[RMDB]
RNA sequence: GGGAACGACUCGAGUAGAGUCGAAAAUAAGCCAAAGGGCUGUCCCGACCGGAGGCCGACAAUCCAGGGAACCGGAUGUCAUCACGUUGUUGCAGUACCAGAUGGCAUCUUAAAUCCGAUCUGCAAAAAAAGUCUUACACCUUCGGGUGUAAGACAAGUUUAGUAUAAGGUUCGCCUUAUACUAAACAAAAGAAACAACAACAACAAC
Reactivity to DMS in 0.01 (KOAc 150mM, MgCl2 10mM, bicine 150mM(pH8.5), 24C), signal-to-noise 3, nucleotides 027 to 156: u010a080a050g010c010c010a060a280a240g020g030g050c010u000g000u000c020c000c010g010a160c050c040g010g000a300g020g030c030c030g030a140c080a070a100u010c060c040a110g020g000g000a070a120c040c050g030g000a020u000g010u000c000a060u000c030a170c200g020u010u000g010u000u000g000c000a090g020u010a090c060c040a190g010a010u000g010g020c010a040u000c040u000u000a100a040a150u000c060c040g010a040u000c020u000g010c060a000a000a030a090a050a100a200g000u000c000u000u000a000c000a000c000c010u000u010c280g010g060g020u000g010u000a000a010g000a010c000a000a000
Reactivity to 2A3 in 0.01 (KOAc 150mM, MgCl2 10mM, bicine 150mM(pH8.5), 24C), signal-to-noise 2, nucleotides 027 to 156: u060a010a020g010c000c010a090a020a010g000g040g020c020u050g080u020c040c010c000g000a010c000c000g000g000a020g030g000c040c010g040a040c060a110a080u040c110c080a030g020g000g000a010a040c040c020g000g000a010u010g000u000c000a000u010c000a000c150g080u090u070g110u090u050g030c000a020g020u020a050c020c060a030g000a010u000g000g000c010a010u000c010u020u030a030a040a020u160c120c010g030a050u000c000u000g000c000a000a000a010a040a040a040a040g030u010c010u020u010a000c000a000c020c010u050u100c140g160g040g010u000g000u000a000a000g000a000c000a000a000